Source: RMDB library OK2TRN, as collected in RNAgym. This 177-nucleotide RNA was probed chemically with DMS. Reactivities are given for positions 27 through 126.
[RMDB]
RNA sequence: GGGAACGACUCGAGUAGAGUCGAAAAGCUCAGAUGUAUCAGUUUUUCUCUAAUGGGGAGCAGAGUAAUGGUCCAUGGGUGAAAGAGAUGAGAAGUCUCAAUGAAGGCGAUUCUUUCUGUGUCAUGAUGAGGAACAUGGAUUCGUCCAUGUUCCUCAAAAAGAAACAACAACAACAAC
Reactivity to DMS in 0.01 (KOAc 150mM, MgCl2 10mM, bicine 150mM(pH8.5), 24C), signal-to-noise 1, nucleotides 027 to 126: g010c010u000c050a090g000a110u000g020u000a040u000c050a090g000u000u000u000u000u000c020u000c040u020a100a040u000g010g000g010g000a050g010c070a030g010a070g010u000a040a060u000g000g010u000c030c030a040u010g010g010g000u010g000a020a040a070g010a020g000a030u000g020a150g020a050a120g000u000c000u010c020a100a070u000g010a040a020g000g000c050g000a080u000u000c020u010u020u000c030u000g030u000g000u010c040a040u000g010a210